[RMDB]
RNA sequence: GGGAACGACUCGAGUAGAGUCGAAAAACGUACCUAUUCGUAGGUACGUGAUUAAAAGCUAGUCAUAUAAAAGGAAGACUAGCAAUAUAGAUUCCUAUAUUAAUAGCACAUGUUUCGACAUGUGCAACCAAGUACGGUGAUUCGUCACCGUACUUGGAAAAGAAACAACAACAACAAC
Reactivity to DMS in 0.01 (KOAc 150mM, MgCl2 10mM, bicine 150mM(pH8.5), 24C), signal-to-noise 2, nucleotides 027 to 126: a010c000g010u000a000c000c000u000a070u000u010c220g050u010a000g000g000u010a000c000g000u000g000a070u010u010a050a100a160a200g000c020u000a010g000u010c010a110u000a170u030a130a020a110a070g000g010a090a200g010a010c000u010a000g020c000a000a040u060a060u040a120g000a280u000u030c000c010u000a070u010a110u020u000a120a160u000a180g000c000a000c000a010u000g000u000u000u010c270g000a050c010a000u000g000u010g010c000a070a050
Reactivity to 2A3 in 0.01 (KOAc 150mM, MgCl2 10mM, bicine 150mM(pH8.5), 24C), signal-to-noise 3, nucleotides 027 to 126: a020c000g000u010a000c000c000u020a050u020u070c280g040u040a000g020g020u000a000c010g000u010g000a010u010u110a040a070a060a000g020c010u010a000g000u000c020a080u150a030u100a300a170a070a020g120g060a090a170g010a000c010u000a000g000c000a020a000u050a010u010a000g110a090u080u000c000c000u050a070u010a030u290u180a160a170u070a140g000c000a010c000a000u000g000u010u100u080c240g110a030c010a000u000g000u000g030c000a000a010